[RMDB]
RNA sequence: GGGAACGACUCGAGUAGAGUCGAAAAAUAUCGCCACAAAGUCAGCCCGUAUGUUGGCCGUACCAUUGGCGCGCGUAUCACGAAAACCAUCUUACGUGGUGAUGUGAUUUACGACAUUGAACAGGGCCACCGUCGUAUGAUUCGUCAUACGACGGUGAAAAGAAACAACAACAACAAC
Reactivity to DMS in 0.01 (KOAc 150mM, MgCl2 10mM, bicine 150mM(pH8.5), 24C), signal-to-noise 4, nucleotides 027 to 126: a130u010a100u000c100g000c000c000a050c210a080a100a100g000u000c070a100g020c010c000c030g010u000a080u000g030u000u010g020g010c020c050g040u010a110c030c030a170u000u000g030g030c030g020c130g020c090g020u000a030u000c010a020c010g000a070a090a170a040c010c000a020u010c140u010u010a130c280g000u000g000g010u000g010a160u030g000u000g010a020u000u000u000a060c010g000a080c070a090u010u010g000a060a040c150a080g020g000g000c090
Reactivity to 2A3 in 0.01 (KOAc 150mM, MgCl2 10mM, bicine 150mM(pH8.5), 24C), signal-to-noise 2, nucleotides 027 to 126: a000u100a020u070c060g040c050c010a040c030a020a140a000g080u110c030a010g020c020c000c010g040u080a090u160g050u080u090g030g020c030c010g030u030a100c010c030a120u080u140g020g000c030g000c000g000c010g080u020a000u040c000a000c000g040a090a040a000a090c010c010a010u050c000u230u300a060c120g000u010g000g000u040g010a090u100g000u010g010a030u030u070u150a040c010g030a000c030a040u010u190g070a090a060c090a130g000g010g030c050
Description:
An RNA of 177 nucleotides, treated with DMS and 2A3 and read out base by base. High 2A3 reactivity points to a flexible backbone, as in loops and unpaired stretches. Conditions: 150 mM KOAc, 10 mM MgCl2 and 150 mM bicine (pH 8.5), 24 C. DMS adducts were read by reverse transcription with MarathonRT. The data come from the RNA Mapping Database (RMDB), library OK2TST. 2A3 adducts were read by reverse transcription with SuperScript II with manganese. For 2A3, 2,154 sequencing reads were counted.